[RMDB]
RNA sequence: GGGAACGACUCGAGUAGAGUCGAAAAGCAACUUAGGAUAUUAGGCUCCCCGUGCGUGUCUCGAACCAUGCCGGGCCAAACCCACGGGGGCUGGCGGUCCCCGUGCGGUCAAAAUCAAACCGCUGGAAAAACAGUUCUAGCUUCGGCUAGAACUGAACCUGUAAUCAGUGUUCGCACUGAUUACAGGAAAAGAAACAACAACAACAAC
Reactivity to 2A3 in 0.01 (KOAc 150mM, MgCl2 10mM, bicine 150mM(pH8.5), 24C), signal-to-noise 3, nucleotides 027 to 156: g050c040a010a110c030u120u160a060g060g020a100u130a120u230u150a100g050g000c030u150c030c020c010c020g040u140g000c010g010u050g020u050c090u060c270g080a050a040c030c000a010u040g000c000c000g000g000g010c010c050a060a090a010c000c000c020a000c000g010g000g000g010g000c000u000g000g000c000g000g030u000c000c000c010c000g000u000g020c050g000g020u030c030a050a080a050a160u110c030a080a070a100c010c000g010c010u040g020g000a050a090a020a020a010c000a000g000u000u000c000u000a020g000c010u040u060c190g070g000c010u000a000g000a000a000c000u000g000a000a000
This 207-nucleotide RNA was probed chemically with 2A3. For 2A3 the reverse transcriptase was SuperScript II with manganese. It was measured as part of the RMDB library M2RFPK.